[RMDB]
RNA sequence: GGGAACGACUCGAGUAGAGUCGAAAAAGGACGCUAGCCUGUUGGGUUUCCUGACCGACCAAAUCCAAGCGAGCUUAAUCCAAGUACCUCGUCUCAAAUUGAGUGUCAAGUGAAUAAGCAUAGUGACAACUCUAGGCAUCUUCGGAUGCCUAGAGUUAAAAGAAACAACAACAACAAC
Reactivity to DMS in 0.01 (KOAc 150mM, MgCl2 10mM, bicine 150mM(pH8.5), 24C), signal-to-noise 3, nucleotides 027 to 126: a060g000g010a120c080g000c050u000a120g000c040c020u000g020u000u040g000g020g040u000u000u000c000c020u010g000a090c060c110g070a130c050c060a020a060a060u030c070c070a020a220g000c040g000a150g020c060u010u000a030a060u020c000c040a150a080g010u040a030c070c000u000c020g020u040c190u030c230a040a100a180u060u040g020a020g000u050g000u000c030a150a050g000u080g000a040a020u050a060a060g040c000a060u000a020g000u000g000a110c180
Reactivity to 2A3 in 0.01 (KOAc 150mM, MgCl2 10mM, bicine 150mM(pH8.5), 24C), signal-to-noise 2, nucleotides 027 to 126: a000g020g000a030c040g020c060u010a030g030c010c050u060g070u000u110g130g000g000u060u000u000c000c000u010g080a100c030c000g010a000c000c050a030a000a100u020c020c020a030a020g010c020g090a010g020c000u000u020a030a000u030c050c000a030a030g010u070a080c000c000u020c000g110u050c040u060c210a160a160a260u220u300g000a020g060u240g060u000c000a000a110g040u070g230a160a150u130a030a000g060c010a040u100a050g040u030g040a070c050